[RMDB]
RNA sequence: GGGAACGACUCGAGUAGAGUCGAAAAGAUAUGGACGAUCUCAGAAGGGAGAACUGGACUCGGAAACGAGUCCUGUUCGAAGAACUUCUGAGGAUCGUCCUAAGUCAAAGUGACGUUCGCGUCACAACGUAUGAGCGUUGUUCGCAACGCUCAUACGAAAAGAAACAACAACAACAAC
Reactivity to 2A3 in 0.01 (KOAc 150mM, MgCl2 10mM, bicine 150mM(pH8.5), 24C), signal-to-noise 1, nucleotides 027 to 126: g020a040u100a020u130g010g000a000c000g030a010u000c020u020c020a030g010a020a000g030g000g000a060g000a020a000c000u020g010g030a000c000u000c010g020g080a110a040a080c000g000a000g000u020c010c000u000g000u000u000c010g010a070a020g000a020a010c000u000u030c000u000g010a040g000g000a000u000c000g000u010c000c000u010a040a010g030u000c060a170a030a020g000u010g000a000c040g030u030u110c300g000c050g130u000c020a010c030a020a010
Reactivity to DMS in 0.01 (KOAc 150mM, MgCl2 10mM, bicine 150mM(pH8.5), 24C), signal-to-noise 2, nucleotides 027 to 126: g010a030u000a300u020g010g020a060c020g000a010u000c000u010c020a010g020a020a010g000g020g020a110g010a020a020c010u000g000g050a000c000u000c000g000g010a140a160a250c000g020a000g000u000c000c000u000g010u010u010c000g000a130a110g010a180a150c000u000u010c000u020g000a030g030g000a010u000c000g040u000c000c010u000a020a060g020u000c050a110a080a210g010u000g000a020c020g020u000u030c150g010c030g020u050c020a010c010a070a060